[RMDB]
RNA sequence: GGGAACGACUCGAGUAGAGUCGAAAAUUCGAUCACGCCGUCGUCCAGGACCAGAUCAAGGCCUUGGCGAAGGCCGGCGCAUUCCGUUCCGGCUCGGCCAUGGACAGCAACUUCACCGCCCCGGUGAGGUAUCAAGCCGAUUCGUCGGCUUGAUACCAAAAGAAACAACAACAACAAC
Reactivity to 2A3 in 0.01 (KOAc 150mM, MgCl2 10mM, bicine 150mM(pH8.5), 24C), signal-to-noise 1, nucleotides 027 to 126: u040u060c030g010a000u020c030a000c140g060c030c000g040u040c020g030u000c000c010a030g050g010a220c010c030a060g040a210u170c070a050a100g030g000c000c010u020u050g040g000c020g030a100a030g020g000c000c000g010g000c030g020c040a030u280u070c110c050g000u080u000c010c000g000g000c020u010c030g020g000c000c020a030u040g020g020a030c020a020g080c040a040a040c020u040u050c020a040c010c030g040c000c020c000c030g030g010u040g010a060
Reactivity to DMS in 0.01 (KOAc 150mM, MgCl2 10mM, bicine 150mM(pH8.5), 24C), signal-to-noise 2, nucleotides 027 to 126: u000u000c080g010a050u000c050a140c110g000c030c020g010u010c070g010u010c010c040a020g000g000a030c000c010a100g010a120u010c210a110a100g020g010c000c020u000u000g020g010c010g000a110a120g000g000c020c020g000g000c130g000c080a120u000u020c160c070g020u000u000c040c020g000g000c030u010c140g030g000c010c080a070u010g010g020a070c120a080g000c120a100a100c070u010u000c010a010c010c020g020c040c000c030c180g000g030u000g000a050

Chemical mapping of a 177-nucleotide RNA with 2A3 and DMS. The DMS profile rests on 1,643 reads. Source: RMDB library OK2TST, as collected in RNAgym.